[RMDB]
RNA sequence: GGGAACGACUCGAGUAGAGUCGAAAAGAAGUACUGUUCGCAGUACUUCAAACGGCAACGGCAAGGCCAAGCCGAACCCGAACGGCAAGCCGAAGGCCAAAAAAACCGUUCCCUUCGGGGAACGGAAGCGUAUCAAUCUGUUCGCAGAUUGAUACGCAAAAGAAACAACAACAACAAC
Reactivity to 2A3 in 0.01 (KOAc 150mM, MgCl2 10mM, bicine 150mM(pH8.5), 24C), signal-to-noise 1, nucleotides 027 to 126: g000a000a000g000u000a000c000u000g040u040u110c260g060c070a000g010u000a000c000u000u000c010a000a010a000c060g030g000c070a100a020c080g060g000c090a130a130g060g010c030c000a010a050g020c010c000g020a070a060c040c000c010g020a090a030c020g020g030c070a090a010g020c020c000g080a050a050g010g000c000c000a060a040a010a030a030a030a000c010c010g000u010u010c000c010c000u000u030c150g090g000g010g000a010a000c000g000g000a010a020
Reactivity to DMS in 0.01 (KOAc 150mM, MgCl2 10mM, bicine 150mM(pH8.5), 24C), signal-to-noise 1, nucleotides 027 to 126: g000a040a000g030u000a010c000u000g040u000u140c180g030c000a020g000u000a000c020u000u020c000a000a020a090c140g030g030c010a110a120c080g000g010c080a020a190g000g000c090c010a220a160g020c050c000g010a030a010c000c000c000g050a110a170c050g000g010c000a060a220g040c060c000g000a060a240g000g050c000c060a000a000a060a060a020a110a090c000c010g000u000u000c000c000c000u000u000c200g060g000g000g000a020a020c010g000g020a010a020
This 177-nucleotide RNA was probed chemically with 2A3 and DMS. For 2A3 the reverse transcriptase was SuperScript II with manganese.